[RMDB]
RNA sequence: GGGAACGACUCGAGUAGAGUCGAAAAUGCUGCAUUUUAUGACAUAAAAUACAGCAGCGAUAGUUAGUAGUUAUGAUAGCCUUCGGGAAGCCAGAGCAAAUACUAAAGCUGCAGUGCGCAGGUCAAGGUGUCCAUCUCUAUUCGUAGAGAUGGACACAAAAGAAACAACAACAACAAC
Reactivity to DMS in 0.01 (KOAc 150mM, MgCl2 10mM, bicine 150mM(pH8.5), 24C), signal-to-noise 3, nucleotides 027 to 126: u000g000c000u000g010c020a020u000u000u020u010a040u000g000a200c160a300u000a030a040a060a020u000a080c020a120g020c010a020g000c010g000a190u000a020g000u000u020a050g030u000a110g020u000u000a080u000g000a120u010a090g020c000c010u000u020c180g020g000g010a050a120g010c090c000a020g010a070g000c060a030a050a190u030a000c010u000a000a050a200g010c010u000g000c010a070g000u010g040c240g000c100a040g010g030u040c100a050a100g000
Reactivity to 2A3 in 0.01 (KOAc 150mM, MgCl2 10mM, bicine 150mM(pH8.5), 24C), signal-to-noise 4, nucleotides 027 to 126: u100g020c010u010g010c020a030u000u040u020u050a130u170g150a070c040a080u130a030a040a000a000u120a020c050a020g000c000a000g010c010g040a070u030a010g090u070u020a030g030u010a010g020u140u080a050u140g060a080u080a080g000c010c010u040u120c190g050g010g010a000a030g030c050c010a030g010a000g020c020a000a050a110u080a030c020u040a030a040a040g010c000u000g000c000a040g010u050g060c060g000c020a010g050g040u080c060a040a020g090